[RMDB]
RNA sequence: GGGAACGACUCGAGUAGAGUCGAAAAGUAUCCCUAGAUGAUAAAACACCGCACAUGGCUCGUAAGAGCGGUUAAAUUAGCAAGUAAUGCAAAUUACGCGAGGUAACGCAUGGCCUAGGCUCGUUAGUCGUGACUACGUAUUCGUACGUAGUCACGAAAAAGAAACAACAACAACAAC
Reactivity to 2A3 in 0.01 (KOAc 150mM, MgCl2 10mM, bicine 150mM(pH8.5), 24C), signal-to-noise 4, nucleotides 027 to 126: g080u080a170u060c000c000c000u000a040g090a240u150g040a030u170a120a090a020a030c080a050c080c010g020c000a030c050a130u080g100g000c030u040c040g050u090a180a010g010a010g060c010g010g000u060u070a020a130a100u040u090a030g050c090a100a000g070u140a070a110u110g010c020a000a090a060u100u000a050c060g030c010g060a040g050g100u080a090a000c040g010c030a030u090g020g000c000c020u030a140g010g050c010u000c080g040u050u150a070g030
Reactivity to DMS in 0.01 (KOAc 150mM, MgCl2 10mM, bicine 150mM(pH8.5), 24C), signal-to-noise 4, nucleotides 027 to 126: g030u030a110u010c010c030c020u020a060g020a100u040g010a130u040a030a050a140a110c160a070c060c040g010c050a090c080a060u010g000g010c020u010c030g000u050a120a100g010a030g040c010g010g000u000u020a080a060a050u000u020a120g020c060a040a110g020u010a040a030u020g020c200a040a100a050u000u010a030c040g000c060g000a050g050g000u010a040a080c050g050c160a050u000g000g000c020c060u000a080g000g000c040u000c040g000u030u010a060g000